[RMDB]
RNA sequence: GGGAACGACUCGAGUAGAGUCGAAAACGCAGAGGGUUCUGAUAACAAAGAACCUAGAUAGCCGCAUCGGUAUUAUAGGAUGUAGUCGGUAAGCCGGAAUGCCUGCAUCGUAAGCCUAUAAGUAAAUUUAAGUGUAAUCACUUCGGUGAUUACACAAGAUCUCUAAUAAGUUCGCUUAUUAGAGAUCAAAAGAAACAACAACAACAAC
Reactivity to 2A3 in 0.01 (KOAc 150mM, MgCl2 10mM, bicine 150mM(pH8.5), 24C), signal-to-noise 6, nucleotides 027 to 156: c080g000c040a020g060a080g050g000g030u020u000c030u040g070a110u090a200a030c040a030a100a010g000a000a000c000c000u010a020g020a090u090a020g040c040c030g030c060a080u090c060g040g010u080a080u210u080a070u120a050g030g020a030u030g030u050a020g060u060c030g010g020u060a070a040g050c020c020g020g050a130a010u070g040c000c010u010g010c000a020u020c030g030u030a040a020g010c010c000u090a070u050a110a060g060u090a040a090a210u130u250u160a190a020g000u000g000u000a000a000u000c000a000c000u020u030c100g050g000u000g000a000u000u000a000c000a000c000a000a000
Reactivity to DMS in 0.01 (KOAc 150mM, MgCl2 10mM, bicine 150mM(pH8.5), 24C), signal-to-noise 3, nucleotides 027 to 156: c060g020c040a110g000a270g040g030g050u000u000c010u010g010a210u000a160a160c300a110a260a050g010a010a050c010c000u000a040g020a160u000a150g010c020c080g020c080a080u000c040g060g020u000a050u000u000a040u000a080g020g010a050u000g010u000a090g020u000c050g010g040u000a030a060g010c020c020g020g010a090a120u000g000c020c000u000g010c050a070u000c020g010u000a060a090g000c010c030u000a060u000a010a090g020u010a070a100a120u010u010u010a070a140g010u000g020u000a020a020u000c000a000c020u000u000c290g040g000u010g010a010u000u000a000c010a010c000a040a080